[RMDB]
RNA sequence: GGGAACGACUCGAGUAGAGUCGAAAACGCAGAUGAUCGGAUCAGGCCGAUCGCGCAUCGUACGCGCGUACGUACUGCUGGCCGACGAUCGUCAGUACUGGUACGAUCUAUGUCACGUCACUGAUCGACGAAUCGUAGGGUUCGCCCUACGAUUCGUAAAAGAAACAACAACAACAAC
Reactivity to 2A3 in 0.01 (KOAc 150mM, MgCl2 10mM, bicine 150mM(pH8.5), 24C), signal-to-noise 2, nucleotides 027 to 126: c040g030c010a010g010a080u100g020a010u040c020g000g030a070u060c050a060g030g000c000c020g000a060u000c010g000c030g000c010a060u150c090g120u120a030c080g110c020g020c040g060u120a030c020g010u010a040c040u130g030c040u060g050g040c000c000g060a110c020g000a030u000c010g010u000c010a010g030u060a090c030u100g040g000u070a020c010g010a010u000c020u040a080u130g100u040c050a030c220g090u000c040a020c150u120g050a140u110c060g020
Reactivity to DMS in 0.01 (KOAc 150mM, MgCl2 10mM, bicine 150mM(pH8.5), 24C), signal-to-noise 4, nucleotides 027 to 126: c100g000c070a090g000a090u000g010a000u010c000g010g000a100u010c070a090g020g020c010c020g000a100u010c100g000c050g020c030a030u000c150g000u010a040c080g010c130g020c200g010u010a070c070g000u000a050c090u000g010c080u000g010g020c040c010g010a120c030g000a020u000c010g010u000c110a110g020u010a060c090u000g000g000u010a070c000g020a020u000c020u000a120u010g010u010c120a090c170g000u010c040a110c100u000g010a090u000c090g000